[RMDB]
Background:
An RNA of 177 nucleotides, treated with DMS and 2A3 and read out base by base. DMS (dimethyl sulfate) methylates the pairing face of unpaired adenines and cytosines. The reactions ran in a buffer of 150 mM KOAc, 10 mM MgCl2 and 150 mM bicine (pH 8.5), at 24 C. The DMS profile rests on 20,433 reads. DMS adducts were read by reverse transcription with MarathonRT.
RNA sequence: GGGAACGACUCGAGUAGAGUCGAAAAGAAUACGCGUCGACGAAUAUUGUUCUUGUAUGGCUAUGUAGAGUUAUACUUUACAUUGAGUACUUUUUUUAAGUACUCUUGGAUAUUAUUCGUCGUUGCAGGGUAGCGUAGUGUUCGCAUUACGCUACCCAAAAGAAACAACAACAACAAC
Reactivity to DMS in 0.01 (KOAc 150mM, MgCl2 10mM, bicine 150mM(pH8.5), 24C), signal-to-noise 3, nucleotides 027 to 126: g010a120a070u040a060c220g010c000g010u010c000g010a000c000g020a010a000u000a000u000u010g000u000u010c040u000u000g030u020a060u010g010g010c070u010a050u030g010u010a050g010a010g010u000u020a100u040a300c000u000u010u010a050c060a020u010u000g000a010g010u000a000c000u010u000u010u040u030u040u020a020a000g010u000a000c000u000c000u000u000g010g000a020u000a020u000u000a010u000u000c000g010u000c000g020u000u010g020c000a160
Reactivity to 2A3 in 0.01 (KOAc 150mM, MgCl2 10mM, bicine 150mM(pH8.5), 24C), signal-to-noise 9, nucleotides 027 to 126: g070a040a070u200a090c100g000c000g010u020c000g000a000c000g000a000a000u010a010u010u060g020u020u010c030u040u050g050u090a090u110g110g020c040u030a050u120g090u120a090g030a030g130u080u110a110u040a100c000u030u060u030a050c030a070u050u090g010a000g000u000a000c000u020u050u050u050u040u110u280a010a000g000u000a000c000u000c000u000u020g000g000a000u000a000u050u010a000u000u000c000g000u000c000g000u010u020g000c010a020